[RMDB]
RNA sequence: GGGAACGACUCGAGUAGAGUCGAAAAGAAAAUCCCGGUCCCGUCAGACAAAUCAGUGACAUGAUGGUCAUAGCGAAAGCACACGCACGAAAUGUCACAGAUGAAAAAGUGCGUGUGACCAAAAAAAGGUAAUUUACUUGUUCGCAAGUAAAUUACCAAAAGAAACAACAACAACAAC
Reactivity to DMS in 0.01 (KOAc 150mM, MgCl2 10mM, bicine 150mM(pH8.5), 24C), signal-to-noise 3, nucleotides 027 to 126: g010a120a090a120a110u010c020c010c010g000g000u010c040c050c030g030u010c110a160g030a060c070a080a090a080u010c040a070g030u000g000a020c020a070u010g000a100u010g000g000u000c000a110u000a080g030c050g000a090a070a100g020c030a020c010a010c000g000c010a030c000g020a070a130a040u000g000u000c030a030c070a120g000a080u000g000a030a130a080a120a180g000u000g010c010g040u000g010u010g010a020c020c050a000a000a030a050a040a060a080
Reactivity to 2A3 in 0.01 (KOAc 150mM, MgCl2 10mM, bicine 150mM(pH8.5), 24C), signal-to-noise 3, nucleotides 027 to 126: g020a000a110a010a060u020c000c000c000g010g040u040c030c010c000g050u050c040a040g000a090c030a040a300a020u030c020a010g020u000g030a010c020a040u070g010a030u100g020g030u030c020a090u120a050g010c050g070a130a080a000g000c000a000c000a000c010g000c000a000c010g060a110a030a040u020g020u040c020a020c020a070g090a090u270g060a030a060a060a040a010g000u000g010c000g000u000g000u000g000a040c000c000a030a130a050a010a020a010a010

Structure probing data (DMS and 2A3) for a 177-nucleotide construct.
The RNA was probed in 150 mM KOAc, 10 mM MgCl2 and 150 mM bicine (pH 8.5) at 24 C.
For 2A3 the reverse transcriptase was SuperScript II with manganese.
DMS adducts were read by reverse transcription with MarathonRT.